[RMDB]
RNA sequence: GGGAACGACUCGAGUAGAGUCGAAAAGAUAUGGAUCAGCAGGCUAGAAGGUCGGAAACGACACUUCUUGGACCCUGACUGAUCCUAAGUCAAAAGCUACUGGAAGCGUUCGCGCUUCCAGUAGCAACUUCAAGCACUUGUUCGCAAGUGCUUGAAGAAAAGAAACAACAACAACAAC
Reactivity to DMS in 0.01 (KOAc 150mM, MgCl2 10mM, bicine 150mM(pH8.5), 24C), signal-to-noise 1, nucleotides 027 to 126: g010a090u000a300u000g010g020a020u000c010a010g000c000a010g040g020c010u000a010g000a020a010g030g010u000c000g030g010a080a040a170c010g000a000c000a150c020u000u010c000u010u010g010g010a180c300c000c000u020g000a120c000u010g000a010u000c010c000u010a010a040g020u010c040a070a070a100a140g000c000u000a040c000u000g000g000a040a030g000c000g000u000u000c240g020c010g000c000u000u000c020c000a000g010u020a000g000c010a010a030
Structure probing data (DMS) for a 177-nucleotide construct.
For DMS, 1,027 sequencing reads were counted.
DMS adducts were read by reverse transcription with MarathonRT.